Source: RMDB library OK2TST, as collected in RNAgym. This 177-nucleotide RNA was probed chemically with 2A3 and DMS. 2A3 adducts were read by reverse transcription with SuperScript II with manganese. The RNA was probed in 150 mM KOAc, 10 mM MgCl2 and 150 mM bicine (pH 8.5) at 24 C. The DMS profile rests on 4,764 reads.

RNA sequence: GGGAACGACUCGAGUAGAGUCGAAAACGAGUAUUGCCAGCAAACAUGGUGAUGAUGCUAACAUCCGCUUGAAAAACGAUCAUUUUAAGCUUGGGCAGGGAAGCAAUUUUCUGAAAAACUUGAUAAAACAGUUAUUCUAGUUCGCUAGAAUAACUGUAAAAGAAACAACAACAACAAC
Reactivity to 2A3 in 0.01 (KOAc 150mM, MgCl2 10mM, bicine 150mM(pH8.5), 24C), signal-to-noise 4, nucleotides 027 to 126: c040g010a020g050u070a060u070u090g050c000c000a010g000c110a080a100a070c050a110u050g000g040u030g030a070u040g010a020u090g010c040u040a030a030c000a050u000c030c040g010c020u020u040g070a040a030a000a010a020c080g050a040u100c030a020u040u060u070u090a070a000g000c000u080u120g020g010g010c010a020g000g020g050a020a010g000c010a020a020u070u030u060u000c030u050g080a040a040a040a080a090c050u090u070g060a070u160a120a090a030
Reactivity to DMS in 0.01 (KOAc 150mM, MgCl2 10mM, bicine 150mM(pH8.5), 24C), signal-to-noise 5, nucleotides 027 to 126: c090g000a080g010u000a040u000u010g020c020c030a070g010c060a090a090a100c130a070u000g010g030u000g010a250u000g000a080u000g010c120u010a080a160c080a070u010c040c070g010c030u000u000g010a030a040a040a080a110c140g000a060u020c090a060u000u020u000u000a060a100g010c030u000u000g030g010g000c040a040g010g000g000a040a060g010c130a050a060u000u000u000u000c040u010g000a060a070a070a090a070c090u000u000g010a080u010a060a100a060